[RMDB]
RNA sequence: GGGAACGACUCGAGUAGAGUCGAAAAACAUGGGAGGGAGCAUGGUUGAAUUAUUAAGUCCUGCCAAUGCCUAUGCUGGGGUUAACCUUGUCUCCCUGCUGGUGUUGGUGCUGCUUUCUGCAGUGUAGCCCUAAAUGCGAUUCGUCGCAUUUAGGGCAAAAGAAACAACAACAACAAC
Reactivity to DMS in 0.01 (KOAc 150mM, MgCl2 10mM, bicine 150mM(pH8.5), 24C), signal-to-noise 1, nucleotides 027 to 126: a050c030a040u020g010g010g010a060g010g010g000a050g000c020a020u000g000g030u010u000g000a070a070u000u010a180u020u010a120a090g000u000c010c020u000g030c160c110a040a060u010g030c110c110u000a060u000g010c050u010g000g000g010g000u000u000a000a030c060c070u010u000g000u020c010u000c000c000c000u000g000c010u000g000g030u010g000u000u000g010g010u010g000c000u000g010c010u000u020u020c150u020g000c030a030g020u000g030u010a120